An RNA of 177 nucleotides, treated with 2A3 and DMS and read out base by base. 2A3 adducts were read by reverse transcription with SuperScript II with manganese. The reactions ran in a buffer of 150 mM KOAc, 10 mM MgCl2 and 150 mM bicine (pH 8.5), at 24 C.

RNA sequence: GGGAACGACUCGAGUAGAGUCGAAAAUAACGGUACUUCAGGUUGAAGCCUGAAGAUUUGUUAGCAACACCCUGAUAAUCGCUCUGGGCAUAACCACCAGAAACGGUGCUUUGACCUGCAAAGGCUGUAGCCUAUCCAAUUUCGAUUGGAUAGGCUAAAAAGAAACAACAACAACAAC
Reactivity to 2A3 in 0.01 (KOAc 150mM, MgCl2 10mM, bicine 150mM(pH8.5), 24C), signal-to-noise 2, nucleotides 027 to 126: u030a000a020c010g050g000u030a140c000u000u000c000a000g050g020u080u120g150a140a030g050c000c020u030g010a000a020g000a000u050u020u190g000u020u030a010g050c030a000a090c020a080c050c000c000u000g070a100u100a220a030u070c040g000c040u020c000u040g010g010g000c050a080u080a150a040c030c040a040c000c010a000g040a040a030a010c040g000g000u060g020c020u090u060u060g060a150c010c000u030g040c060a050a050a090g040g000c000u060g040
Reactivity to DMS in 0.01 (KOAc 150mM, MgCl2 10mM, bicine 150mM(pH8.5), 24C), signal-to-noise 5, nucleotides 027 to 126: u000a060a030c010g010g000u000a090c000u000u000c000a000g010g000u010u010g010a150a200g000c010c000u010g000a040a010g000a050u000u010u020g030u000u000a020g020c120a090a120c160a130c080c060c020u010g010a080u010a100a050u010c070g010c110u000c020u000g000g020g010c130a060u000a060a090c160c110a080c020c010a040g000a080a070a170c080g010g000u000g000c110u000u000u000g000a090c030c010u000g000c110a040a100a030g010g010c020u000g010